[RMDB]
RNA sequence: GGGAACGACUCGAGUAGAGUCGAAAACAAUGGUAACAGGAUUUGACGACUUGCCGAAUGAGUGCCACCGGGCGUCAAUGGCUUCUGGAUUGUAUUUAGAGCUACGUCUGCUCCAUUCAUCCCACAGCGCUACACCGUUGCCGUGAGUGGCGUCAUGUGCCACUUAGAAGUUCGCUUCUAAGUGGCAAAAAGAAACAACAACAACAAC
Reactivity to DMS in 0.01 (KOAc 150mM, MgCl2 10mM, bicine 150mM(pH8.5), 24C), signal-to-noise 1, nucleotides 027 to 156: c050a100a080u020g010g020u000a030a080c010a050g020g020a220u020u010u000g010a090c050g020a060c040u000u000g000c000c020g000a100a060u000g010a090g010u010g010c000c010a080c040c040g020g000g000c030g000u000c040a050a070u000g010g010c010u000u030c030u000g000g010a070u000u010g030u000a300u000u000u000a070g030a110g000c020u000a070c120g020u000c020u010g010c020u000c030c020a050u000u000c070a090u010c000c000c100a050c050a060g030c000g010c050u000a080c070a130c010c020g000u000u000g000c000c000g000u000g000a120g040u000g020g050c040g050u000c010a060u010g000
Reactivity to 2A3 in 0.01 (KOAc 150mM, MgCl2 10mM, bicine 150mM(pH8.5), 24C), signal-to-noise 3, nucleotides 027 to 156: c030a020a050u070g020g030u140a060a070c040a070g060g050a140u010u060u070g010a030c020g030a070c060u050u090g040c010c000g100a110a060u120g050a040g080u130g040c000c000a030c050c010g100g020g000c030g030u010c010a030a040u040g070g010c000u100u030c020u110g060g010a090u120u120g080u160a100u070u160u140a020g000a020g030c010u060a020c090g170u020c040u050g000c020u000c000c010a000u050u050c000a000u000c000c000c000a060c020a000g040c030g000c030u090a030c040a030c080c040g050u090u110g030c040c020g080u080g040a100g010u010g030g000c010g000u040c010a020u170g040